[RMDB]
RNA sequence: GGGAACGACUCGAGUAGAGUCGAAAAUGGGGGCGGCAGUGGAGCCAUGGGAUGCUCCUCCCGAUUCCGUCCAUCCCCUUCCCCCAGGAGGUCCCCCCAGGAAUGGCGGGAUCCCACUCUGCAGGGUCUUAAUAUUUAGGUUCGCCUAAAUAUUAAGAAAAGAAACAACAACAACAAC
Reactivity to DMS in 0.01 (KOAc 150mM, MgCl2 10mM, bicine 150mM(pH8.5), 24C), signal-to-noise 2, nucleotides 027 to 126: u010g010g000g010g010g010c160g000g020c270a110g010u020g000g010a030g030c070c070a170u000g020g010g010a300u010g020c070u000c030c020u000c050c010c040g000a130u010u000c010c020g010u000c010c000a100u000c020c010c010c050u000u000c000c000c010c060c060a080g000g010a020g010g000u000c010c010c010c090c000c000a060g020g040a100a080u000g000g030c300g010g000g010a000u000c000c040c010a110c090u000c080u000g000c120a100g010g010g000u000
Reactivity to 2A3 in 0.01 (KOAc 150mM, MgCl2 10mM, bicine 150mM(pH8.5), 24C), signal-to-noise 2, nucleotides 027 to 126: u090g020g030g000g000g010c020g010g010c050a090g040u060g040g030a010g020c050c090a140u130g110g080g030a100u110g020c000u010c000c000u010c020c030c010g020a060u100u020c010c000g030u020c020c010a040u080c000c010c000c000u020u060c000c010c000c000c000a010g030g020a070g030g000u000c000c000c010c020c000c010a000g010g080a090a010u030g000g010c000g000g000g000a010u010c010c000c010a040c020u180c030u100g040c060a070g170g000g040u000

Description: Structure probing data (DMS and 2A3) for a 177-nucleotide construct. Values cover nucleotides 27 to 126. High DMS reactivity at an A or C suggests that its Watson-Crick edge is free. DMS adducts were read by reverse transcription with MarathonRT. For DMS, 1,627 sequencing reads were counted. Conditions: 150 mM KOAc, 10 mM MgCl2 and 150 mM bicine (pH 8.5), 24 C.